Notes: The record gives the reactivity of an RNA of 207 nucleotides to 2A3 and DMS. The RNA was probed in 150 mM KOAc, 10 mM MgCl2 and 150 mM bicine (pH 8.5) at 24 C. Source: RMDB library OK3TST, as collected in RNAgym. In probing experiments dimethyl sulfate is read out at A N1 and C N3, which are open when not base-paired. Values cover nucleotides 27 to 156. 2A3 adducts were read by reverse transcription with SuperScript II with manganese.

RNA sequence: GGGAACGACUCGAGUAGAGUCGAAAACGAUCAGUACGUUCGCGUACUGAUCGAAGCUACUGGAGACAGUAGCAAGUCUAAGACCUUGUUAGGUGGAAACAAGGAAAAAUGGAGGAAGGGCGGACCUCCAUACUUAGACAACCACUAACCGUCCAAAAGCAGUAUCAUUAUUCGUAAUGAUACUGCUAAAAGAAACAACAACAACAAC
Reactivity to 2A3 in 0.01 (KOAc 150mM, MgCl2 10mM, bicine 150mM(pH8.5), 24C), signal-to-noise 9, nucleotides 027 to 156: c010g000a000u010c000a000g010u000a000c010g030u030u090c240g000c000g110u000a000c000u000g000a000u000c000g000a000a000g000c000u000a000c000u000g020g020a050g010a040c000a000g000u000a000g000c000a000a020g000u000c000u000a000a030g010a180c000c000u010u010g020u030u050a150g030g140u090g100g080a060a020a000c010a000a000g020g000a050a090a040a020a020u030g010g010a010g020g020a060a300g020g000g000c020g040g000a210c000c000u000c000c000a000u010a010c000u000u000a000g000a000c010a030a040c050c010a070c050u030a020a020c000c000g000u000c000c000a040a030a000
Reactivity to DMS in 0.01 (KOAc 150mM, MgCl2 10mM, bicine 150mM(pH8.5), 24C), signal-to-noise 3, nucleotides 027 to 156: c000g020a000u000c000a010g010u000a010c010g030u000u010c260g050c020g060u000a010c000u000g000a010u000c010g030a030a070g010c010u000a010c000u010g000g010a300g000a300c010a030g010u000a000g020c000a050a080g000u000c030u000a010a030g010a300c020c000u000u000g000u010u000a060g040g020u020g080g000a300a050a020c000a030a030g000g000a010a020a080a190a130u000g000g020a000g010g000a030a030g010g010g010c010g010g000a280c020c000u000c010c010a040u000a000c040u000u000a010g020a020c020a100a110c010c010a100c100u000a070a080c010c010g000u010c000c010a060a060a180